[RMDB]
RNA sequence: GGGAACGACUCGAGUAGAGUCGAAAACAGAAAAUGCAAAGUUGGACUGAAAAUAUCCCACGUCUUCUAAGCAAUCUGCUUAAGGCUUCCAAACUUACCUUAAUUUGGUAAGAAAAUAAGCUGCCCUCCGUGUGAAUGUUUUCGAACAUUCACACGGAAAAGAAACAACAACAACAAC
Reactivity to 2A3 in 0.01 (KOAc 150mM, MgCl2 10mM, bicine 150mM(pH8.5), 24C), signal-to-noise 3, nucleotides 027 to 126: c000a000g050a010a110a010a030u060g000c010a090a050a000g040u110u100g030g050a020c010u040g080a060a050a050a160u260a130u080c030c030c010a010c030g000u000c020u100u000c010u020a030a000g000c000a000a170u000c010u030g020c040u110u060a150a010g000g000c000u040u020c060c010a060a060a030c000u000u000a000c000c000u160u120a100a200u290u210u030g000g000u000a010a000g000a010a070a000a000u080a010a010g010c000u010g000c000c000c000u000
Background
This 177-nucleotide RNA was probed chemically with 2A3. The reactions ran in a buffer of 150 mM KOAc, 10 mM MgCl2 and 150 mM bicine (pH 8.5), at 24 C. It was measured as part of the RMDB libraries RFM100 and RFMREP.